[RMDB]
RNA sequence: GGGAACGACUCGAGUAGAGUCGAAAAAGUGAGUAUGGCUCGUUACGACGAGCCAGACUCACAACGGUUUUCCUAAAUCGUCGUGAGACGGACCUUGGAAAACCUAGUAUUUAAAUAACUAGGUCAAAAAACGGGUGGAGCUUCGGCUCCACCCGAACCUAACAUAAUCCUUCGGGAUUAUGUUAGGAAAAGAAACAACAACAACAAC
Reactivity to 2A3 in 0.01 (KOAc 150mM, MgCl2 10mM, bicine 150mM(pH8.5), 24C), signal-to-noise 1, nucleotides 027 to 156: a010g000u000g010a010g000u000a010u010g010g000c010u010c010g000u000u030a070c200g010a010c030g000a030g000c030c000a000g000a000c000u000c000a000c000a030a000c010g010g010u030u000u000u010c000c000u000a010a010a020u090c010g000u000c010g010u040g140a110g000a060c000g000g010a000c000c000u010u040g000g000a010a000a000a000c000c000u010a020g000u020a010u060u130u120a060a150a100u090a030a020c070u020a010g000g020u020c050a010a010a220a060a000a080c030g010g150g000u040g000g020a030g000c040u090u070c300g260g000c010u040c000c000a000c010c010c000g010a000a000
This 207-nucleotide RNA was probed chemically with 2A3. Values cover nucleotides 27 to 156. The reactions ran in a buffer of 150 mM KOAc, 10 mM MgCl2 and 150 mM bicine (pH 8.5), at 24 C. 2A3 adducts were read by reverse transcription with SuperScript II with manganese.